RNA sequence: GGGAACGACUCGAGUAGAGUCGAAAAGCUGCUGGACAGGCUGGAGGAAGAAAUCCGGGCAGACCGCGUGAGCAGUGAAAGCCGGGCGUGGCUUGCGCAGUGCGGGCUGACGGUGGAGCAACUGGCAGCUCGAGGCUGAUUUCGAUCAGCCUCGAGCAAAAGAAACAACAACAACAAC
Reactivity to DMS in 0.01 (KOAc 150mM, MgCl2 10mM, bicine 150mM(pH8.5), 24C), signal-to-noise 1, nucleotides 027 to 126: g020c040u000g020c010u000g010g000a090c210a080g020g000c030u000g000g020a140g030g050a150a120g020a030a150a110u000c000c000g000g000g000c000a010g010a070c020c000g040c000g000u000g000a100g010c000a110g000u000g000a140a000a020g000c000c000g000g000g030c300g000u000g010g000c010u000u000g000c010g030c010a100g010u000g050c000g020g010g030c010u000g000a050c060g000g000u000g000g010a100g010c040a130a160c060u010g000g000c080a020

Chemical mapping of a 177-nucleotide RNA with DMS. The data come from the RNA Mapping Database (RMDB), library OK2TST. Conditions: 150 mM KOAc, 10 mM MgCl2 and 150 mM bicine (pH 8.5), 24 C. For DMS the reverse transcriptase was MarathonRT.